[RMDB]
RNA sequence: GGGAACGACUCGAGUAGAGUCGAAAAGAAAGAAACAGUUGGCUAGCCGAACGCACGAGGAUUAAAGCCAACCGAGCGAGUCGGAAAGCACGACCGACAAGAAAAGCCCUACAAUCGUGCAAGAAAAGCAUUUACCCGGAUUCGUCCGGGUAAAUGCAAAAGAAACAACAACAACAAC
Reactivity to 2A3 in 0.01 (KOAc 150mM, MgCl2 10mM, bicine 150mM(pH8.5), 24C), signal-to-noise 1, nucleotides 027 to 126: g100a030a100a000g090a040a040a000c000a020g000u000u000g010g010c030u080a130g040c010c020g100a100a010c030g020c060a010c060g000a160g040g000a030u070u240a150a020a010g000c000c000a000a000c000c000g000a090g170c120g000a200g000u000c000g020g000a200a300a000g060c070a010c000g000a000c000c020g080a000c010a050a000g170a010a060a000a000g090c010c000c000u050a000c020a000a000u040c020g010u000g000c020a000a050g030a030a030a000a000
Reactivity to DMS in 0.01 (KOAc 150mM, MgCl2 10mM, bicine 150mM(pH8.5), 24C), signal-to-noise 1, nucleotides 027 to 126: g060a130a000a190g000a080a010a000c270a040g030u010u000g000g120c030u000a190g000c070c010g040a030a200c180g070c140a060c080g000a080g000g000a200u000u030a100a090a040g040c000c000a000a000c000c000g000a240g000c080g000a060g000u000c000g000g000a000a100a220g130c000a000c070g010a100c060c080g000a040c000a000a140g040a000a110a100a000g000c000c000c000u000a010c060a060a000u000c000g020u000g000c010a000a090g000a120a030a270a010
An RNA of 177 nucleotides, treated with 2A3 and DMS and read out base by base. Values cover nucleotides 27 to 126. Reactivities are rounded to 0.1 and cut off at 0 and 3. For DMS the reverse transcriptase was MarathonRT.